Notes
Structure probing data (2A3 and DMS) for a 207-nucleotide construct. For DMS the reverse transcriptase was MarathonRT. Conditions: 150 mM KOAc, 10 mM MgCl2 and 150 mM bicine (pH 8.5), 24 C. 2A3 adducts were read by reverse transcription with SuperScript II with manganese.

RNA sequence: GGGAACGACUCGAGUAGAGUCGAAAACAUCUCAGUUUGCCAAUUUCAGUUUUAAAAUGGAAAGUCCCAUGUCCGAGGAACCCCUUCAACACUAAGCAAACUGGGUCCAAUGGUCACCUAAUAGUUGGCUGCACUAGGGCACUCAGGAUUUCCACUGAAAACGAAUUUAAUUCGUUAAAUUCGUUUUAAAAGAAACAACAACAACAAC
Reactivity to 2A3 in 0.01 (KOAc 150mM, MgCl2 10mM, bicine 150mM(pH8.5), 24C), signal-to-noise 4, nucleotides 027 to 156: c050a100u060c010u000c000a010g000u030u040u010g030c030c010a070a110u070u140u120c070a070g050u050u070u100u240a110a160a030a050u130g010g010a120a050a050g090u050c030c000c000a030u080g040u000c020c030g010a060g000g060a080a080c000c030c020c010u060u100c110a070a070c030a030c150u160a110a020g000c020a020a010a020c010u010g000g010g000u020c020c010a030a070u140g020g000u020c020a020c020c020u110a120a110u080a210g020u060u030g020g030c030u060g000c060a030c100u050a040g020g000g000c040a020c040u080c050a020g000g010a000u020u010u020c000c030a030c040u080g020
Reactivity to DMS in 0.01 (KOAc 150mM, MgCl2 10mM, bicine 150mM(pH8.5), 24C), signal-to-noise 3, nucleotides 027 to 156: c040a080u010c010u000c000a060g010u010u000u000g020c010c010a110a180u000u000u010c080a160g010u000u010u000u010a020a070a080a060u000g000g000a040a040a110g000u000c020c010c060a090u000g010u000c020c030g000a090g010g010a070a100c050c010c010c050u000u000c070a040a090c070a120c080u010a080a050g010c020a020a020a040c010u010g000g010g010u000c040c030a070a040u000g030g010u000c040a060c040c050u000a080a130u000a070g020u000u000g020g000c010u000g010c060a070c080u000a050g010g030g020c000a040c060u010c110a050g010g010a300u000u000u000c000c010a050c090u000g000